[RMDB]
RNA sequence: GGGAACGACUCGAGUAGAGUCGAAAACUUCGACGUGCCCGAUGAGCUCGUCCGGAUCUUCGGGAUCGAACGCGUUGAUGAACGCGCGGGCGUACAACCGACCCGCACGGAAAAACAUGGGUCGGGCGUACUGCCGGUGAUUCGUCACCGGCAGUACAAAAGAAACAACAACAACAAC
Reactivity to 2A3 in 0.01 (KOAc 150mM, MgCl2 10mM, bicine 150mM(pH8.5), 24C), signal-to-noise 2, nucleotides 027 to 126: c010u100u050c040g060a050c010g020u020g020c000c010c020g020a120u100g020a030g020c030u020c100g060u020c010c030g010g000a030u000c000u080u060c120g140g120g040a050u050c060g090a100a020c020g010c010g020u000u020g110a220u170g060a080a010c020g020c000g000c000g000g020g040c030g000u030a060c020a040a070c040c010g070a150c030c010c010g020c020a020c020g080g040a140a150a060a000a010c040a130u180g000g000g030u020c020g000g000g000c000
Reactivity to DMS in 0.01 (KOAc 150mM, MgCl2 10mM, bicine 150mM(pH8.5), 24C), signal-to-noise 2, nucleotides 027 to 126: c070u010u010c040g080a110c040g000u000g000c020c200c050g020a100u010g000a080g030c080u010c060g050u010c040c010g020g000a040u000c030u000u000c110g010g000g010a040u000c110g010a090a170c020g020c010g000u010u010g000a120u010g010a050a030c020g010c010g050c000g000g010g000c020g000u000a050c130a090a160c050c000g000a040c010c000c000g020c150a020c040g000g010a090a030a050a040a030c160a190u000g010g020g000u000c010g010g000g000c140

Background: Chemical mapping of a 177-nucleotide RNA with 2A3 and DMS. Reactivities are given for positions 27 through 126. The reactions ran in a buffer of 150 mM KOAc, 10 mM MgCl2 and 150 mM bicine (pH 8.5), at 24 C. Source: RMDB library OK2TST, as collected in RNAgym. For 2A3 the reverse transcriptase was SuperScript II with manganese.